[RMDB]
RNA sequence: GGGAACGACUCGAGUAGAGUCGAAAAUGGACUUCGGCACUGGCGUACCCGCUGGCGAGUGAUGCAGCAGCAUCGGUAUCUGGGGCGUUGCUCAAGAAGGUCCCUGCCCGGGAUGCGGCCUGGGCAACCUGGUUAACAACUUCGGUUGUUAACCAGGAAAAGAAACAACAACAACAAC
Reactivity to DMS in 0.01 (KOAc 150mM, MgCl2 10mM, bicine 150mM(pH8.5), 24C), signal-to-noise 2, nucleotides 027 to 126: u050g020g020a120c030u000u020c020g010g020c040a100c110u030g000g000c060g020u000a070c090c040c100g000c040u000g020g010c040g000a100g040u010g000a020u000g010c060a210g010c120a020g020c060a010u010c070g010g020u020a060u010c030u010g010g000g020g000c030g010u000u000g020c020u010c080a110a130g020a090a120g010g000u000c030c000c000u000g000c010c000c000g010g000g030a080u020g010c110g040g040c000c000u000g000g010g000c000a020a030
Reactivity to 2A3 in 0.01 (KOAc 150mM, MgCl2 10mM, bicine 150mM(pH8.5), 24C), signal-to-noise 5, nucleotides 027 to 126: u130g060g010a010c020u010u010c070g020g000c020a030c120u100g020g000c020g030u120a300c030c020c010g010c120u050g040g010c030g030a060g060u160g030a040u040g000c040a170g010c030a020g000c010a080u040c050g090g000u160a080u070c060u080g040g000g030g010c030g050u030u070g020c010u010c070a050a040g060a030a000g080g020u020c000c000c030u050g010c000c000c000g000g000g000a080u170g050c070g050g070c000c000u000g000g010g000c000a000a000